[RMDB]
RNA sequence: GGGAACGACUCGAGUAGAGUCGAAAAGAAAGUUCAAGCAAGCUAGCCGGCAAAAGAGCAAACUUGACCACCAAGGAUAAAAGAGAUCUUAUCCAAGGAUGCAAAAGAUAAUCUCACUUUUGACACCAAAACAGGGAGUAGUUCGCUACUCCCUGAAACAGAUGUUAAGUUUCGACUUAACAUCUGUAAAAGAAACAACAACAACAAC
Reactivity to 2A3 in 0.01 (KOAc 150mM, MgCl2 10mM, bicine 150mM(pH8.5), 24C), signal-to-noise 4, nucleotides 027 to 156: g060a020a070a000g020u060u050c050a030a020g010c020a070a020g000c050u070a010g040c000c060g070g000c070a070a090a090a020g050a020g000c020a080a040a030c040u030u020g020a050c000c020a030c010c010a060a020g020g010a020u020a030a080a030a010g170a020g010a030u040c030u040u020a010u020c020c010a020a030g060g010a050u040g010c010a020a010a010a010g020a030u110a110a120u120c040u030c090a030c010u010u040u020u050g100a090c050a030c050c030a030a050a070a110c020a010g000g000g000a000g000u010a010g010u010u060c130g000c090u000a000c000u030c000c000c000u000g000a000a000
Reactivity to DMS in 0.01 (KOAc 150mM, MgCl2 10mM, bicine 150mM(pH8.5), 24C), signal-to-noise 3, nucleotides 027 to 156: g010a060a050a110g030u000u000c050a040a090g020c000a050a230g010c030u000a230g030c030c030g020g010c030a130a070a090a170g010a080g000c030a060a150a050c020u000u000g010a130c090c030a110c070c010a060a300g000g010a060u000a010a040a030a060g000a170g010a160u010c090u000u000a040u000c020c030a040a300g000g020a090u000g020c010a010a020a040a050g000a070u000a060a080u010c030u010c010a180c030u000u000u000u020g000a170c060a050c040c020a020a060a030a170c020a000g020g000g000a030g000u020a030g000u000u000c240g020c000u000a030c000u000c000c000c010u010g000a000a060
Annotation
This 207-nucleotide RNA was probed chemically with 2A3 and DMS. For 2A3, 4,273 sequencing reads were counted.